This 207-nucleotide RNA was probed chemically with 2A3 and DMS.
2A3 is a SHAPE reagent: it acylates the 2'-hydroxyl of flexible nucleotides of all four kinds.
The RNA was probed in 150 mM KOAc, 10 mM MgCl2 and 150 mM bicine (pH 8.5) at 24 C.
Source: RMDB library OK3TST, as collected in RNAgym.
For 2A3, 9,845 sequencing reads were counted.
RNA sequence: GGGAACGACUCGAGUAGAGUCGAAAAAGGCACACUUCUAUAUCAUUUUACAAACAGAGUGACAGAGAGGUUCACCUCUGAGCUCUGUUAGUGAACGCAGAGCUUACAGGUGAAGCGAUGUAAGAACUGCGUUCAUAGUUCUGUGAUUGCUGUGCCACCUAAAAUACCAUUUCGAUGGUAUUUUAGGAAAAGAAACAACAACAACAAC
Reactivity to 2A3 in 0.01 (KOAc 150mM, MgCl2 10mM, bicine 150mM(pH8.5), 24C), signal-to-noise 9, nucleotides 027 to 156: a000g010g000c010a010c000a010c020u160u090c130u190a180u060a030u230c020a020u020u060u060u090a050c050a040a030a000c010a000g020a000g030u050g240a180c010a010g020a000g040a050g070g100u270u260c120a120c100c000u000c000u000g000a000g000c000u000c000u000g000u000u010a010g000u000g000a010a000c000g000c000a000g010a020g040c000u000u000a000c000a020g090g060u160g200a100a030g100c050g100a050u020g000u000a000a000g000a050a040c000u000g000c010g010u000u000c000a000u000a020g010u030u020c020u030g020u010g000a020u010u080g030c060u010g020u000g000c000c000a020
Reactivity to DMS in 0.01 (KOAc 150mM, MgCl2 10mM, bicine 150mM(pH8.5), 24C), signal-to-noise 4, nucleotides 027 to 156: a040g020g040c000a010c010a040c070u010u010c090u000a140u010a070u010c020a080u000u000u010u000a290c070a300a080a060c080a060g000a050g030u000g010a180c020a010g000a030g020a100g010g010u010u000c120a110c050c010u000c010u000g010a300g010c000u000c010u010g030u000u000a050g010u000g010a040a040c090g000c010a000g020a100g020c000u000u000a010c030a030g010g030u010g020a090a100g010c130g030a130u010g020u000a050a020g000a010a050c000u000g010c050g000u010u000c010a010u000a030g010u000u000c060u000g000u000g020a110u010u010g010c030u000g010u000g000c000c000a090